[RMDB]
RNA sequence: GGGAACGACUCGAGUAGAGUCGAAAAGUUCUUGAAGGGUAAGGAUGUGUUUUCCCCCCAGGGACCAGUUGAGAAAUAGCUAGAAUUAAUUAGUUCUGCUGUAAUCAUUGAGGUGCUGAUCCUAGAGUGUGGCUUCCACUGCAGUACUGGAUGUGGACCAUCCGAUAAUGUUCGCAUUAUCGGAUGGAAAAGAAACAACAACAACAAC
Reactivity to 2A3 in 0.01 (KOAc 150mM, MgCl2 10mM, bicine 150mM(pH8.5), 24C), signal-to-noise 2, nucleotides 027 to 156: g040u050u070c020u050u060g040a100a070g030g010g000u080a050a030g050g020a050u080g080u060g090u090u120u150u160c010c000c010c000c030c010a010g000g000g020a040c000c020a040g000u030u070g130a020g010a050a200a080u050a010g000c120u110a020g030a020a050u090u080a060a120u110u020a160g030u030u000c000u000g000c010u010g020u080a040a040u050c040a040u030u090g060a050g090g000u060g000c010u020g000a060u020c000c000u030a040g020a000g150u090g000u010g020g030c020u060u030c040c010a030c020u060g000c050a030g030u080a070c030u000g070g020a070u050g010u090g010g010a000
Reactivity to DMS in 0.01 (KOAc 150mM, MgCl2 10mM, bicine 150mM(pH8.5), 24C), signal-to-noise 1, nucleotides 027 to 156: g020u000u010c020u000u000g010a060a120g000g010g030u010a020a070g000g000a100u000g000u010g000u000u000u000u000c020c000c000c000c050c020a150g010g050g010a020c040c010a080g030u030u010g010a140g000a150a090a070u000a040g030c010u000a020g000a010a060u000u000a090a220u020u010a100g010u000u000c000u000g000c010u030g030u000a060a250u000c020a140u000u000g020a140g050g000u000g030c020u000g010a050u010c030c020u010a070g000a100g030u000g050u020g020g020c040u000u010c010c020a080c030u000g000c030a090g000u010a070c040u000g010g000a120u000g030u000g010g000a240

The record gives the reactivity of an RNA of 207 nucleotides to 2A3 and DMS.